[RMDB]
RNA sequence: GGGAACGACUCGAGUAGAGUCGAAAAGCUGAGUUAUGAUGGUUUGAAGCAUCAUAGUCUGAGUAGUGAUCCUCAGACACUCAGCACAGACAGUAUGUCUCUAUGGAUCACUACAUAGAGGCUUGUGCUUCAAACCACAAGCACAUACUGUAGCUGAACGCCUAAAUUAGUUCGCUAAUUUAGGCGUAAAAGAAACAACAACAACAAC
Reactivity to DMS in 0.01 (KOAc 150mM, MgCl2 10mM, bicine 150mM(pH8.5), 24C), signal-to-noise 4, nucleotides 027 to 156: g010c010u010g010a110g020u000u010a060u010g000a080u000g020g010u000u000u000g010a090a160g010c010a010u040c090a100u010a030g050u000c000u000g000a170g030u000a050g020u000g000a090u010c050c000u000c060a030g010a050c040a100c010u000c030a080g020c070a250c150a160g000a250c050a090g000u000a050u010g010u000c030u020c020u010a090u000g010g010a140u000c050a030c020u000a020c000a060u000a120g020a070g030g020c010u000u000g020u000g010c020u000u000c070a040a050a050c110c030a000c030a030a080g040c100a130c050a090u000a050c050u000g010u010a080g020c020u000g010a160
Reactivity to 2A3 in 0.01 (KOAc 150mM, MgCl2 10mM, bicine 150mM(pH8.5), 24C), signal-to-noise 6, nucleotides 027 to 156: g010c010u020g020a010g050u140u050a070u090g130a110u040g010g000u000u010u010g000a000a000g010c010a010u110c060a110u220a040g010u000c020u060g100a010g040u000a000g000u000g000a010u010c000c000u030c030a010g010a000c000a010c010u060c050a030g110c070a020c020a030g110a020c010a010g090u140a080u100g010u000c000u010c050u090a110u180g000g000a000u000c010a000c010u010a000c000a020u240a020g220a020g050g000c010u020u030g000u000g020c000u010u010c000a010a000a000c000c000a000c000a010a000g040c030a010c010a030u100a030c010u070g040u140a010g010c010u030g030a060